[RMDB]
RNA sequence: GGGAACGACUCGAGUAGAGUCGAAAAGAUAUGGACGUACCACCCGCGCACUUUGUAGGGAGCUUACACUCGGAAACGAGUGCGAGCAUCGAUCUACAAAGUGCGCGGGUGGUCACGUCCUAAGUCAUCAUAUGCAUACCUUCGGGUAUGCAUAUGAAAAAGAAACAACAACAACAAC
Reactivity to DMS in 0.01 (KOAc 150mM, MgCl2 10mM, bicine 150mM(pH8.5), 24C), signal-to-noise 2, nucleotides 027 to 126: g010a070u000a300u010g000g010a010c000g020u000a010c010c000a010c010c020c000g060c010g010c000a000c000u010u000u000g010u000a010g000g000g010a020g050c010u000u000a080c000a000c000u000c000g020g010a150a170a260c000g000a030g040u000g010c030g020a010g020c010a300u000c230g010a060u010c000u000a010c010a010a020a000g010u000g000c000g020c020g010g000g040u000g020g000u000c050a000c000g010u000c010c000u000a010a080g010u000c040a180